[RMDB]
RNA sequence: GGGAACGACUCGAGUAGAGUCGAAAAACCGGUGCUAAUACCGAAUAGUUUCUGACACCUCAUGGUGUCAGAGGGAAAGUUGGCUUUUAGCUAACACUUACGGAUGGGCCCGCGGCGCAUUAGCUAGGCUUAUAUGUCGGUUCGCCGACAUAUAAGCAAAAGAAACAACAACAACAAC
Reactivity to 2A3 in 0.01 (KOAc 150mM, MgCl2 10mM, bicine 150mM(pH8.5), 24C), signal-to-noise 3, nucleotides 027 to 126: a000c000c000g010g040u100g010c040u080a130a070u050a180c000c000g030a040a070u080a050g060u030u080u000c000u010g000a000c010a020c000c000u200c120a230u300g000g000u000g000u000c000a010g000a010g030g000g010a120a300a170g010u010u010g000g000c000u090u170u150u300a020g000c000u020a030a010c020a010c030u060u130a020c040g160g020a080u060g080g070g000c010c010c000g000c020g030g000c050g000c040a050u090u030a040g020c060u030a030g120
Reactivity to DMS in 0.01 (KOAc 150mM, MgCl2 10mM, bicine 150mM(pH8.5), 24C), signal-to-noise 3, nucleotides 027 to 126: a100c070c000g010g020u000g020c050u010a040a040u000a070c030c000g020a220a090u010a090g010u010u030u000c010u000g000a010c010a000c010c000u010c300a140u010g020g040u000g000u010c000a000g000a010g020g020g020a120a050a110g020u000u000g010g000c030u000u020u000u000a030g010c000u000a020a020c010a060c100u000u000a140c070g000g000a100u000g000g010g010c070c030c040g000c070g010g020c060g010c130a060u000u010a020g010c020u010a090g010
Structure probing data (2A3 and DMS) for a 177-nucleotide construct. For 2A3, 2,362 sequencing reads were counted. It was measured as part of the RMDB library OK2TRN. 2A3 adducts were read by reverse transcription with SuperScript II with manganese. The RNA was probed in 150 mM KOAc, 10 mM MgCl2 and 150 mM bicine (pH 8.5) at 24 C. For DMS, 2,338 sequencing reads were counted. Reactivities are rounded to 0.1 and cut off at 0 and 3.